[RMDB]
RNA sequence: GGGAACGACUCGAGUAGAGUCGAAAACAAAAACCUACGUGCAGUACGAUGUUAAUAAGCGAACCAGCAAGUGGGAAUCGCAACGAUGGUAAUUAGAAGGGAGUGCUAAUUUACUCUUCCCGUUUAACAUUUACGGGUCCUUCGGGACCCGUAAAUGAAAAGAAACAACAACAACAAC
Reactivity to DMS in 0.01 (KOAc 150mM, MgCl2 10mM, bicine 150mM(pH8.5), 24C), signal-to-noise 1, nucleotides 027 to 126: c150a040a080a150a110a130c050c000u010a020c060g000u000g000c010a100g010u000a050c040g010a120u010g000u000u050a050a110u010a070a180g030c050g020a040a020c030c040a120g010c050a030a060g000u000g020g010g020a110a110u000c160g000c080a080a010c190g000a090u000g000g010u010a000a050u000u000a000g000a060a070g000g000g040a120g050u030g020c050u000a030a030u010u000u000a020c020u000c180u010u000c010c010c040g020u000u000u000a030a120